Structure probing data (DMS) for a 177-nucleotide construct. The DMS profile rests on 1,151 reads. Source: RMDB library TTRINS, as collected in RNAgym. The RNA was probed in 150 mM KOAc, 10 mM MgCl2 and 150 mM bicine (pH 8.5) at 24 C. DMS adducts were read by reverse transcription with MarathonRT.

RNA sequence: GGGAACGACUCGAGUAGAGUCGAAAAGAUAUGGAUAUUUGCAUCCGAAGAACUGUAGAGCAACCAGAGGCUAAUCGGAAACGAUUAGCCUCUGGGCUACAGGGAGGAUGACAAAUAUCCUAAGUCACCUACUAGAAGGGUUCGCCCUUCUAGUAGGAAAAGAAACAACAACAACAAC
Reactivity to DMS in 0.01 (KOAc 150mM, MgCl2 10mM, bicine 150mM(pH8.5), 24C), signal-to-noise 1, nucleotides 027 to 126: g040a000u000a070u010g010g000a030u000a010u000u000u010g010c010a000u000c000c000g070a120a260g020a170a120c010u000g000u010a010g010a300g010c210a170a230c040c030a000g020a020g000g010c010u000a000a020u020c000g030g000a020a030a040c000g010a010u010u000a010g020c000c000u000c010u000g000g010g000c010u000a010c000a010g000g000g000a020g000g000a020u010g000a070c010a000a030a010u010a000u000c010c000u010a020a090g010u000c010a280